[RMDB]
RNA sequence: GGGAACGACUCGAGUAGAGUCGAAAAGAUAUGGACAGAGAACUACUUGCUGACAGGCUAUGAAGUCGGAAACGAUGGAGCCUGACAGCAAGCUCUGUCCUAAGUCAAAGGCUGCUUCGGCAGCCAACGUAAAAUGUUGCUUCGGCAACAUUUUACGAAAAGAAACAACAACAACAAC
Reactivity to 2A3 in 0.01 (KOAc 150mM, MgCl2 10mM, bicine 150mM(pH8.5), 24C), signal-to-noise 1, nucleotides 027 to 126: g010a000u070a000u130g000g000a000c010a000g040a000g020a080a010c040u250a030c010u300u000g000c010u010g020a040c010a000g010g000c000u120a240u300g070a030a010g010u010c040g050g050a100a000a020c010g000a000u000g000g000a000g000c010c000u000g000a000c000a010g000c010a000a000g000c030u000c000u000g010u000c010c010u000a020a010g010u000c010a030a070a060g000g000c010u000g020c000u090u100c240g080g060c040a020g020c030c000a000a000
Reactivity to DMS in 0.01 (KOAc 150mM, MgCl2 10mM, bicine 150mM(pH8.5), 24C), signal-to-noise 1, nucleotides 027 to 126: g000a030u000a300u000g000g010a040c000a000g000a030g000a180a020c090u010a300c010u000u000g000c010u000g020a160c020a000g020g010c000u010a230u000g000a140a210g000u010c010g000g000a100a020a170c000g000a010u000g000g000a010g000c060c000u000g010a060c010a010g010c040a000a000g000c000u000c010u000g000u000c020c000u000a000a110g030u000c020a130a090a140g040g020c000u000g000c000u000u010c150g000g010c000a010g020c000c020a000a000